RNA sequence: GGGAACGACUCGAGUAGAGUCGAAAAGUUAGUGCUUCUUUAUUAUCAACCCCACGAAUCCAAUUAGAUGCACGAGUUUUCCAAUUAGCAAUUUUAUCUAAUCCUUUUGCUAUCGGACCAAGGUCUCCGUUCAUUCGUUUAUCUUGAUAAUUUGCAAGACAAGAGACAAAUUCGUUUGUCUCUUGUCAAAAGAAACAACAACAACAAC
Reactivity to 2A3 in 0.01 (KOAc 150mM, MgCl2 10mM, bicine 150mM(pH8.5), 24C), signal-to-noise 4, nucleotides 027 to 156: g030u050u090a000g000u000g030c010u050u040c010u070u210u140a160u100u070a100u140c040a030a100c020c050c010c030a040c050g020a050a030u070c070c040a030a080u110u050a080g010a040u040g010c040a000c020g030a040g040u070u090u020u010c030c000a080a100u080u040a040g000c010a020a040u000u090u110u100a090u120c040u120a080a150u090c030c040u050u100u060u030g010c020u040a030u090c030g010g030a010c020c050a050a040g080g000u020c010u000c060c010g030u030u040c020a040u040u050c010g070u070u060u150a100u020c100u040u000g000a000u010a100a060u020u100u150g050c060a060a080
Reactivity to DMS in 0.01 (KOAc 150mM, MgCl2 10mM, bicine 150mM(pH8.5), 24C), signal-to-noise 2, nucleotides 027 to 156: g000u000u000a050g010u030g020c030u000u010c030u000u000u020a230u060u010a070u010c000a040a140c050c030c070c260a140c050g000a050a070u000c080c070a060a160u000u000a090g010a030u000g010c090a080c080g010a130g020u000u000u000u030c020c010a050a110u010u000a090g090c040a020a100u000u000u000u000a040u010c090u000a060a080u010c090c070u000u010u010u000g010c050u010a100u020c030g030g000a110c080c050a120a120g040g010u010c030u000c000c020g060u010u010c040a130u000u010c020g000u010u000u000a100u020c060u000u000g000a040u000a030a080u010u000u000g000c040a100a200